[RMDB]
RNA sequence: GGGAACGACUCGAGUAGAGUCGAAAAUGCCUGCACCCACUUUUCGAGGAUGUCUUCCCUUCCUCCCCUCCGGGAUUUCUUCUGAUCGGACUGGCUCAUCCUCGGAAACGGGGGCGGCGGCGUCCGUAAACCGCUAGCUUCGGCUAGCGGAAAAGAAACAACAACAACAAC
Reactivity to 2A3 in 0.01 (KOAc 150mM, MgCl2 10mM, bicine 150mM(pH8.5), 24C), signal-to-noise 4, nucleotides 027 to 129: u130g030c000c020u060g030c030a170c010c010c010a100c070u000u000u010u000c020g000a000g000g000a010u000g020u010c050u060u040c060c000c000u020u060c030c010u040c000c000c000c000u070c030c040g060g010g000a060u080u110u010c070u160u010c010u080g110a130u080c010g010g020a050c020u050g040g020c000u020c060a030u020c000c010u000c000g000g000a010a000a050c060g010g010g000g000g020c000g000g000c010g010g010c010g050u030c030c000g000u030a150a030a060

The record gives the reactivity of an RNA of 170 nucleotides to 2A3.
The RNA was probed in 150 mM KOAc, 10 mM MgCl2 and 150 mM bicine (pH 8.5) at 24 C.